[RMDB]
Structure probing data (2A3 and DMS) for a 177-nucleotide construct. Reactivities are given for positions 27 through 126. For 2A3, 994 sequencing reads were counted. For DMS the reverse transcriptase was MarathonRT. For 2A3 the reverse transcriptase was SuperScript II with manganese. The reactions ran in a buffer of 150 mM KOAc, 10 mM MgCl2 and 150 mM bicine (pH 8.5), at 24 C. Source: RMDB library OK1LIB, as collected in RNAgym. For DMS, 2,154 sequencing reads were counted.
RNA sequence: GGGAACGACUCGAGUAGAGUCGAAAACUCGAUGGGUGAAAGCGCAAUCCGCAGCUUCUGCUCCACUAACUGUGAGUACUGAGUAAAGAAAUCCGUCAGGUGACACGAGGCGUUUGCAAGGGGAAACUAUGCGAGGUAGUUUCGACUACCUCGCAUAAAAAGAAACAACAACAACAAC
Reactivity to 2A3 in 0.01 (KOAc 150mM, MgCl2 10mM, bicine 150mM(pH8.5), 24C), signal-to-noise 2, nucleotides 027 to 126: c040u020c090g130a140u140g000g060g020u010g080a170a040a050g090c040g070c060a030a160u100c110c000g010c030a060g000c000u020u000c000u030g000c000u090c000c010a040c050u130a200a000c080u040g080u070g060a010g070u010a000c080u090g050a040g020u090a020a000a230g080a030a120a030u020c030c070g010u000c020a040g020g070u010g030a040c000a000c080g040a000g000g000c000g020u050u020u180g010c040a000a000g050g000g000g040a020a030a030c040
Reactivity to DMS in 0.01 (KOAc 150mM, MgCl2 10mM, bicine 150mM(pH8.5), 24C), signal-to-noise 2, nucleotides 027 to 126: c000u020c040g020a090u000g000g000g010u000g000a030a070a070g000c000g020c070a080a050u020c160c040g020c030a070g030c000u020u000c050u000g040c030u020c010c050a070c090u010a070a140c040u000g020u000g000a040g000u020a070c130u010g000a070g030u030a080a120a040g000a100a180a100u020c010c050g000u020c010a110g010g040u000g000a010c150a110c060g000a050g030g000c030g020u010u010u000g000c000a060a050g000g000g060g010a130a020a030c150